[RMDB]
Background: An RNA of 177 nucleotides, treated with 2A3 and DMS and read out base by base. For DMS the reverse transcriptase was MarathonRT. The reactions ran in a buffer of 150 mM KOAc, 10 mM MgCl2 and 150 mM bicine (pH 8.5), at 24 C. 2A3 adducts were read by reverse transcription with SuperScript II with manganese.
RNA sequence: GGGAACGACUCGAGUAGAGUCGAAAAGAUGCAGACAUUGAGCUACAAAAGAGCGAAGAAGAGCUUGAGGCUAUUAGCAGGGCACUAUCAUUCUUCAGUUUGUUUGAGCCUAACAUUGAAAGAGUGGCGUAAGCGAAAGCUUCGGCUUUCGCUUACGAAAAGAAACAACAACAACAAC
Reactivity to 2A3 in 0.01 (KOAc 150mM, MgCl2 10mM, bicine 150mM(pH8.5), 24C), signal-to-noise 2, nucleotides 027 to 126: g030a010u120g000c030a030g030a120c010a050u100u120g050a030g030c000u060a050c120a040a120a030a010g070a020g030c030g020a060a020g060a070a010g010a080g040c000u090u100g000a050g010g060c010u060a110u200u130a150g000c030a020g010g050g070c020a000c050u090a070u110c020a120u000u050c000u000u020c010a080g050u000u040u020g070u010u020u080g060a010g030c000c010u020a040a030c030a050u010u110g040a100a090a060g060a020g010u020g070g050
Reactivity to DMS in 0.01 (KOAc 150mM, MgCl2 10mM, bicine 150mM(pH8.5), 24C), signal-to-noise 3, nucleotides 027 to 126: g010a080u000g010c070a050g010a060c060a080u000u010g000a130g010c030u010a080c090a090a050a100a100g000a040g020c050g010a070a060g000a060a040g010a110g000c040u000u000g000a080g000g000c040u010a060u000u010a080g020c050a100g010g000g010c080a100c090u000a100u010c060a020u000u000c010u000u000c020a040g010u000u010u000g000u000u010u000g010a070g010c060c030u000a080a050c090a040u010u000g000a040a040a050g000a030g030u010g000g010
High DMS reactivity at an A or C suggests that its Watson-Crick edge is free.